[RMDB]
The record gives the reactivity of an RNA of 177 nucleotides to DMS.
Source: RMDB library OK2TST, as collected in RNAgym.
The RNA was probed in 150 mM KOAc, 10 mM MgCl2 and 150 mM bicine (pH 8.5) at 24 C.
DMS adducts were read by reverse transcription with MarathonRT.
RNA sequence: GGGAACGACUCGAGUAGAGUCGAAAACUAUGGUAUAACCAGUAUACCAGUUUGUCACCCCCUGGUAGGUUGAUUGGCUAAAUGGAUGGCAGACUUGUAUAUAGAAUCGGCUGCAGGGGCACUGUGGCGAUGGUGUCAUGUUCGCAUGACACCAUCGAAAAGAAACAACAACAACAAC
Reactivity to DMS in 0.01 (KOAc 150mM, MgCl2 10mM, bicine 150mM(pH8.5), 24C), signal-to-noise 1, nucleotides 027 to 126: c020u000a090u000g010g010u000a060u000a090a160c140c100a170g000u000a020u000a000c000c020a050g000u000u020u000g000u000c030a060c050c020c030c110c090u000g010g020u000a030g010g010u010u000g020a080u000u000g010g010c000u000a000a080a120u000g000g000a060u010g000g000c000a060g000a050c090u010u000g020u000a010u000a110u000a050g000a100a080u000c060g030g010c010u010g000c040a010g000g010g000g000c150a070c070u010g010u010g000g010